The data come from the RNA Mapping Database (RMDB), library OK1LIB. Chemical mapping of a 177-nucleotide RNA with DMS and 2A3. Values cover nucleotides 27 to 126.
RNA sequence: GGGAACGACUCGAGUAGAGUCGAAAACAAUGCUCGUCCUCUCCUAACAACAACAAUCCACACGCCUACCUAACAACAACAAUGGAGAGGACGAGCUAACAACAACAAUGGUAGGCGUGUGGUAACAGGGUUUAUACUAGUUCGCUAGUAUAAACCCAAAAGAAACAACAACAACAAC
Reactivity to DMS in 0.01 (KOAc 150mM, MgCl2 10mM, bicine 150mM(pH8.5), 24C), signal-to-noise 2, nucleotides 027 to 126: c010a230a090u120g000c040u010c000g010u000c010c000u000c000u000c000c000u000a080a140c280a100a160c300a100a070c200a040a050u040c030c000a000c000a000c020g000c000c000u000a000c010c000u000a050a060c290a070a040c300a000a020c250a000a090u050g000g000a000g050a070g030g030a000c000g000a000g090c020u020a020a010c140a140a060c300a100a160c120a040a040u010g010g000u020a000g000g000c000g080u020g010u000g000g000u000a050a040c150a170
Reactivity to 2A3 in 0.01 (KOAc 150mM, MgCl2 10mM, bicine 150mM(pH8.5), 24C), signal-to-noise 4, nucleotides 027 to 126: c030a020a150u210g000c000u010c010g030u000c010c010u030c010u040c000c040u200a150a100c080a030a010c000a000a020c010a040a120u060c000c010a000c020a000c000g000c010c000u000a010c000c010u190a130a080c110a040a010c020a030a000c020a070a190u220g010g000a000g000a000g000g000a010c000g000a000g000c000u000a000a000c010a000a010c000a000a010c020a030a130u160g000g000u000a010g000g020c000g000u000g000u000g000g000u000a010a000c010a050